[RMDB]
RNA sequence: GGGAACGACUCGAGUAGAGUCGAAAACUGACAAAGGCUUCGGCUUCAUCACUCCUGACGAUGGCUCUAAAGAUGUGUUCGUACACUUCUCUGCUAUCCAGAACGAUGGUUACAAAUCUCUGGACGAUGAUUGGCAGGAUUUCGAUCCUGCCAAUCAAAAAGAAACAACAACAACAAC
Reactivity to DMS in 0.01 (KOAc 150mM, MgCl2 10mM, bicine 150mM(pH8.5), 24C), signal-to-noise 2, nucleotides 027 to 126: c070u010g000a090c190a020a100a030g000g030c020u000u000c000g000g000c000u030u000c010a170u000c140a060c100u010c070c020u040g040a040c130g020a110u000g030g050c050u020c080u060a140a090a050g000a080u010g000u000g000u000u040c130g000u040a090c040a070c010u020u010c010u010c030u000g020c060u000a250u000c000c000a050g000a050a150c180g020a080u000g020g010u000u000a040c300a050a080a000u000c020u000c010u000g020g000a010c220g000a130
Reactivity to 2A3 in 0.01 (KOAc 150mM, MgCl2 10mM, bicine 150mM(pH8.5), 24C), signal-to-noise 2, nucleotides 027 to 126: c060u040g060a020c060a020a120a050g020g030c000u020u020c000g060g050c030u080u040c020a010u040c000a000c020u040c000c000u000g030a000c050g050a040u080g010g000c050u010c030u130a220a200a000g060a010u150g030u030g020u060u100c050g010u140a000c000a010c020u040u000c000u000c000u100g000c000u030a040u010c000c010a000g000a090a050c030g020a070u020g000g050u030u060a080c020a070a090a110u000c010u000c000u050g040g040a020c070g080a080
The record gives the reactivity of an RNA of 177 nucleotides to DMS and 2A3. 2A3 is a SHAPE reagent: it acylates the 2'-hydroxyl of flexible nucleotides of all four kinds.